[RMDB]
RNA sequence: GGGAACGACUCGAGUAGAGUCGAAAACGAAUCAUGAGAACUCUGUUUCGAAAGGAUUUGCGGUAGAGCACAUAGAAUGGGACCCGAAAGGUUGUGAACUAUGCUUGAGGAAGGCGAAGCCAGGGGAAUCCUCAAGGGGGUUCGCCCCCUUGAGGAUAAAAGAAACAACAACAACAAC
Reactivity to DMS in 0.01 (KOAc 150mM, MgCl2 10mM, bicine 150mM(pH8.5), 24C), signal-to-noise 2, nucleotides 027 to 126: c090g050a090a030u030c020a030u020g000a300g000a070a050c100u010c120u030g000u020u000u000c000g010a080a110a070g080g010a010u000u000u000g000c060g030g040u000a040g000a110g030c030a050c100a030u040a100g010a080a180u020g000g020g000a080c020c000c000g010a080a060a140g040g000u000u000g020u010g000a130a090c080u010a050u000g010c050u010u000g000a100g000g000a060a060g010g020c070g000a020a140g000c010c110a090g000g000g000g000a020
Reactivity to 2A3 in 0.01 (KOAc 150mM, MgCl2 10mM, bicine 150mM(pH8.5), 24C), signal-to-noise 2, nucleotides 027 to 126: c010g130a010a010u090c050a070u080g050a010g080a120a000c050u170c050u080g010u050u120u080c090g050a040a050a050g010g000a120u000u030u100g040c020g040g020u100a050g030a010g050c040a000c010a090u190a030g110a120a030u090g000g080g000a000c020c000c000g020a000a160a000g000g020u190u000g100u050g100a020a000c010u050a020u080g070c060u000u070g070a040g020g060a130a100g030g000c080g060a000a000g020c000c000a000g000g000g010g040a050

The record gives the reactivity of an RNA of 177 nucleotides to DMS and 2A3. Values cover nucleotides 27 to 126. It was measured as part of the RMDB library RFM100. For DMS the reverse transcriptase was MarathonRT. For 2A3 the reverse transcriptase was SuperScript II with manganese. For 2A3, 513 sequencing reads were counted. The RNA was probed in 150 mM KOAc, 10 mM MgCl2 and 150 mM bicine (pH 8.5) at 24 C. As a SHAPE reagent, 2A3 marks flexible, mostly unpaired nucleotides at the ribose 2'-OH.